[RMDB]
RNA sequence: GGGAACGACUCGAGUAGAGUCGAAAAGCCGUAAACGCAUCCGGCGAAUAAGAUGCAUGAGCGAAAGCUCUAAGAUAAUUGGCCGUUUCGUAGGGGCCGUAGACCCUACUUAUUAAUGCUCGAGAUGUGUGGAGCGAUCAUCACGCAAGACUAACAAGAUAUCAGCACUCUUCGGAGUGCUGAUAUCAAAAGAAACAACAACAACAAC
Reactivity to 2A3 in 0.01 (KOAc 150mM, MgCl2 10mM, bicine 150mM(pH8.5), 24C), signal-to-noise 2, nucleotides 027 to 156: g030c000c000g020u070a060a110a000c060g020c010a000u040c020c000g040g000c020g020a040a040u190a100a030g030a010u040g020c060a070u120g010a020g000c010g010a080a040a000g000c000u000c000u020a100a020g000a020u070a080a080u090u070g040g020c060c020g030u010u130u270c110g020u070a030g040g040g020g000c050c040g000u020a020g070a080c030c000c000u000a010c000u000u080a090u050u170a090a080u130g000c010u060c100g090a130g000a030u050g020u020g000u070g090g010a010g010c010g010a040u080c040a080u110c030a020c040g000c010a020a050g070a220c040u090a150a050c060a080a070
Reactivity to DMS in 0.01 (KOAc 150mM, MgCl2 10mM, bicine 150mM(pH8.5), 24C), signal-to-noise 1, nucleotides 027 to 156: g030c000c020g060u000a040a160a040c110g000c010a010u000c070c040g010g030c000g010a160a170u000a050a050g020a210u000g020c070a170u010g000a050g000c020g020a190a090a300g000c000u000c000u000a050a080g010a050u020a000a130u020u010g010g030c030c020g020u000u000u000c140g020u100a070g010g010g060g010c040c080g000u000a160g000a110c020c000c000u000a080c030u000u000a020u000u000a100a040u000g000c060u160c030g000a110g010a030u020g070u030g070u010g000g000a070g060c030g010a110u000c030a150u000c060a180c000g000c010a090a100g010a300c050u010a050a110c090a090a170

An RNA of 207 nucleotides, treated with 2A3 and DMS and read out base by base. 2A3 adducts were read by reverse transcription with SuperScript II with manganese. The 2A3 profile rests on 928 reads. DMS adducts were read by reverse transcription with MarathonRT. Conditions: 150 mM KOAc, 10 mM MgCl2 and 150 mM bicine (pH 8.5), 24 C.